[RMDB]
RNA sequence: GGGAACGACUCGAGUAGAGUCGAAAAUGUUAAUGUGGCGACAGGCGCCCAGGCUGUUGCCCGAUCCCUUGAUUGGUCCAAGGUCACUCUGGACGGCCGGCCACUCACUACCAUCCAGCAGUACUCCCCUGUGGUUAGGAUUCGUCCUAACCACAGGAAAAGAAACAACAACAACAAC
Reactivity to 2A3 in 0.01 (KOAc 150mM, MgCl2 10mM, bicine 150mM(pH8.5), 24C), signal-to-noise 1, nucleotides 027 to 126: u200g010u130u140a160a060u170g000u080g040g000c020g000a090c100a170g030g000c010g010c000c020c010a000g030g080c070u050g040u120u020g060c020c030c000g000a070u060c010c010c000u040u120g100a170u080u200g030g010u000c020c050a120a020g060g000u060c010a030c060u080c040u000g000g020a000c000g040g040c000c020g060g010c020c000a000c010u000c000a040c050u060a060c010c020a030u100c030c020a010g020c070a050g090u070a100c070u070c050c020
Reactivity to DMS in 0.01 (KOAc 150mM, MgCl2 10mM, bicine 150mM(pH8.5), 24C), signal-to-noise 2, nucleotides 027 to 126: u000g010u000u000a090a070u020g030u010g000g030c000g000a060c000a010g010g000c030g000c020c000c000a130g000g000c080u000g000u000u000g040c040c010c060g000a130u010c100c040c050u000u030g010a140u010u010g010g010u010c100c080a100a070g010g010u000c120a060c060u000c030u010g020g000a030c050g020g000c050c060g000g000c040c020a030c050u000c130a110c050u010a070c040c040a060u000c020c010a050g000c130a050g010u020a140c100u000c030c050